[RMDB]
RNA sequence: GGGAACGACUCGAGUAGAGUCGAAAAAUGUUCUUAUUUGGAAUGUUUAUUCUAGCGCUUUUAACGUUUAUCCAGAAAAUGAAAUAGAUCGCCCACGCUAAGGAAACGAUCUAUUUCGUUUGUAAACAAAGUGAAUUCUCUUCGGAGAAUUCACUUUAAAAGAAACAACAACAACAAC
Reactivity to DMS in 0.01 (KOAc 150mM, MgCl2 10mM, bicine 150mM(pH8.5), 24C), signal-to-noise 2, nucleotides 027 to 126: a000u010g010u000u000c000u000u000a120u010u010u010g000g000a020a010u000g000u000u000u000a050u020u020c000u000a130g010c190g050c110u090u010u010u010a050a200c120g000u010u010u000a040u050c180c180a150g000a070a030a030a000u010g000a000a000a000u000a000g000a000u000c000g000c090c020c120a210c130g000c210u070a080a090g020g000a100a060a260c010g000a010u000c010u000a000u010u000u010c000g020u000u000u020g020u000a030a080a060c150
Reactivity to 2A3 in 0.01 (KOAc 150mM, MgCl2 10mM, bicine 150mM(pH8.5), 24C), signal-to-noise 2, nucleotides 027 to 126: a000u010g010u010u000c010u110u160a300u290u250u290g110g000a040a030u000g050u060u080u050a100u020u040c060u060a050g040c000g030c060u180u050u030u210a060a050c070g030u000u030u030a080u130c070c000a080g160a060a110a020a020u020g000a000a000a000u000a010g000a000u020c020g030c070c030c000a010c020g080c120u130a020a210g010g000a190a020a050c020g000a000u000c010u000a000u010u000u010c010g000u000u000u010g070u060a080a000a060c030